RNA sequence: GGGAACGACUCGAGUAGAGUCGAAAAUCUCCUGAGAUCGACUAGGAUCAGCUAGGACUAGCUGAGAUCUCCUUCGAAGCUGAUCCUAGGACUUCCUAGGAUCUCAGCUGAGAUCUCCUGAAGGACUCUCUAGAGCUGAGAGAGAAGAGUCUCAGGAUGUUGUGUUCAAUUUCGAUUGAACACAACAAAAAGAAACAACAACAACAAC
Reactivity to DMS in 0.01 (KOAc 150mM, MgCl2 10mM, bicine 150mM(pH8.5), 24C), signal-to-noise 1, nucleotides 027 to 156: u000c010u000c000c030u000g000a010g000a020u000c000g020a150c060u000a060g010g000a140u000c070a100g000c020u010a110g000g020a120c000u010a070g000c040u000g010a250g010a030u000c090u010c110c050u020u000c050g000a300a040g040c000u000g030a060u000c020c000u010a020g000g010a120c090u000u010c010c000u010a000g020g000a030u000c100u010c010a020g010c050u010g020a080g000a040u010c020u000c000c040u000g010a120a110g000g000a070c020u000c000u010c050u000a080g010a160g030c100u000g000a100g000a070g000a130g000a040a080g010a190g010u000c010u010c020a030g010g010a110
Reactivity to 2A3 in 0.01 (KOAc 150mM, MgCl2 10mM, bicine 150mM(pH8.5), 24C), signal-to-noise 4, nucleotides 027 to 156: u030c010u000c010c000u010g000a010g000a010u020c020g110a080c060u010a000g020g010a010u050c040a030g110c010u010a010g000g020a040c030u050a020g020c020u070g030a010g040a080u050c100u100c090c050u070u050c010g030a020a000g000c000u010g010a140u020c000c000u000a010g010g020a010c010u070u050c020c000u030a030g000g020a000u000c000u000c000a000g010c040u030g010a010g000a030u020c020u010c030c020u030g080a160a080g100g010a030c010u040c000u000c040u080a080g030a060g220c120u120g050a020g000a000g020a000g000a140a040g000a010g040u010c010u000c010a000g010g010a030